[RMDB]
RNA sequence: GGGAACGACUCGAGUAGAGUCGAAAAGAUGGAGACGUUGUAACUCUGUUAUUCAUUAGAACGGAGACUGCAGACAUACCCUUAGUCUGCAGUACCUGACUAUGAAUUAGGUACGUCACCAAGGGUAUGUCACGAUCCUAUUCGUAGGAUCGUGACAAAAAGAAACAACAACAACAAC
Reactivity to DMS in 0.01 (KOAc 150mM, MgCl2 10mM, bicine 150mM(pH8.5), 24C), signal-to-noise 1, nucleotides 027 to 126: g000a130u010g030g010a040g010a040c020g010u000u010g000u000a070a060c050u010c030u010g010u000u000a010u000u010c040a040u000u010a030g010a070a180c130g000g000a130g000a000c000u000g030c000a010g000a010c000a060u000a200c020c030c070u000u000a120g000u000c000u010g010c010a010g000u000a000c020c000u020g000a300c000u010a030u000g000a020a070u000u000a040g000g020u000a000c020g000u000c020a070c000c000a010a030g000g000g010u010a090
Conditions: 150 mM KOAc, 10 mM MgCl2 and 150 mM bicine (pH 8.5), 24 C. Chemical mapping of a 177-nucleotide RNA with DMS. Values cover nucleotides 27 to 126.